[RMDB]
RNA sequence: GGGAACGACUCGAGUAGAGUCGAAAAGUAACUGAAUGAUGAUAUAAUUUGCGAUCUAGGGCUAAUCACUUGGAACACCGCCAUGUUCUAUAUGGGUGAUUAGCGAAGUGCGAAAAAUUUUUUAUCUUCGCACGGAGUAGUUCGCUACUCCGUGCGAAAAAGAAACAACAACAACAAC
Reactivity to 2A3 in 0.01 (KOAc 150mM, MgCl2 10mM, bicine 150mM(pH8.5), 24C), signal-to-noise 1, nucleotides 027 to 126: g050u050a050a050c060u110g020a060a130u240g060a060u010g000a040u110a000u000a130a070u000u090u040g020c000g010a130u140c030u140a000g110g070g040c000u000a010a010u000c000a000c000u000u030g000g000a000a000c000a040c000c040g140c000c040a000u030g000u030u000c000u050a030u090a140u300g000g000g000u000g000a000u010u000a010g000c010g000a020a000g110u110g000c000g000a200a000a000a000a000u000u080u000u040u040u040a010u090c030u000